[RMDB]
Chemical mapping of a 207-nucleotide RNA with 2A3. High 2A3 reactivity points to a flexible backbone, as in loops and unpaired stretches.
RNA sequence: GGGAACGACUCGAGUAGAGUCGAAAACGCCUUGUUCGCAAGGCGAAAAAUCCUAAGUCGGACUUGGAUUUAGAGAACGACGAGAGAGGUCGGAAACGACCUGGAAUGUCGCUCUCUUGUCAGUCCGAUAUGGAAAAAAGGUUUGUUCGCAAACCAAUCGCAUCAUGAAGUUCGCUUCAUGAUGCGAAAAAGAAACAACAACAACAAC
Reactivity to 2A3 in 0.01 (KOAc 150mM, MgCl2 10mM, bicine 150mM(pH8.5), 24C), signal-to-noise 1, nucleotides 027 to 156: c000g000c000c000u030u000g020u020u040c070g120c130a010a000g000g000c000g010a000a020a000a000a000u010c010c000u040a110a080g010u000c010g000g000a020c040u040u300g130g060a060u300u240u110a020g000a000g000a010a080c000g020a000c050g000a010g000a030g000a000g100g000u000c030g000g050a080a080a160c000g000a000c000c010u000g000g080a150a090u140g000u000c000g040c000u000c010u000c000u020u030g010u020c000a000g020u000c020c010g000a000u000a020u010g020g000a000a100a020a180a050a000g000g050u030u020u030g070u040u100c230g020c070a000a000a050c020c000a010a130